[RMDB]
RNA sequence: GGGAACGACUCGAGUAGAGUCGAAAAAGAGGUCAUCCAAUUUGUCAAAAGUGGGAAGAAGGGCCCCAUUCCUUCUCUGAAGGUUUUGGACACUCUCCUUAAGACCUCUGCCACAAACUGGCCAGAGUUUCUUCAAAGAGUGAAUGAUGACGGGAUACCCUAUAUUUACCUUCGGGUAAAUAUAGGGAAAAGAAACAACAACAACAAC
Reactivity to 2A3 in 0.01 (KOAc 150mM, MgCl2 10mM, bicine 150mM(pH8.5), 24C), signal-to-noise 4, nucleotides 027 to 156: a000g090a040g010g040u020c020a020u020c040c020a070a140u090u110u140g070u070c050a060a060a070a090g100u120g030g030g020a050a080g050a030a010g060g020g000c030c010c000c010a010u050u060c000c000u040u010c160u020c110u190g000a040a020g040g000u030u030u100u090g030g010a000c000a010c030u010c000u030c030c040u050u070a020a010g000a020c000c000u010c010u000g000c000c010a050c060a060a280a060c110u040g000g030c130c060a010g000a000g020u080u230u020c020u030u030c040a030a060a030g000a010g040u030g030a020a090u140g030a020u030g010a010c030g020g030g010a030u140a090
Reactivity to DMS in 0.01 (KOAc 150mM, MgCl2 10mM, bicine 150mM(pH8.5), 24C), signal-to-noise 2, nucleotides 027 to 156: a090g010a110g030g020u000c010a050u000c020c040a080a140u030u000u000g010u000c090a040a080a110a100g030u000g010g010g010a090a070g000a020a080g020g030g040c020c040c000c000a150u000u010c000c010u000u010c000u030c080u010g030a060a100g020g020u000u000u010u010g020g000a140c040a030c010u010c020u010c010c040u000u000a060a050g000a070c300c000u000c020u000g000c000c000a040c020a080a140a170c300u000g020g000c050c060a020g000a050g010u000u010u000c020u000u020c090a070a050a080g010a030g020u010g010a080a070u010g010a080u000g000a060c030g000g000g010a150u000a100
Structure probing data (2A3 and DMS) for a 207-nucleotide construct. For 2A3 the reverse transcriptase was SuperScript II with manganese. The DMS profile rests on 3,677 reads.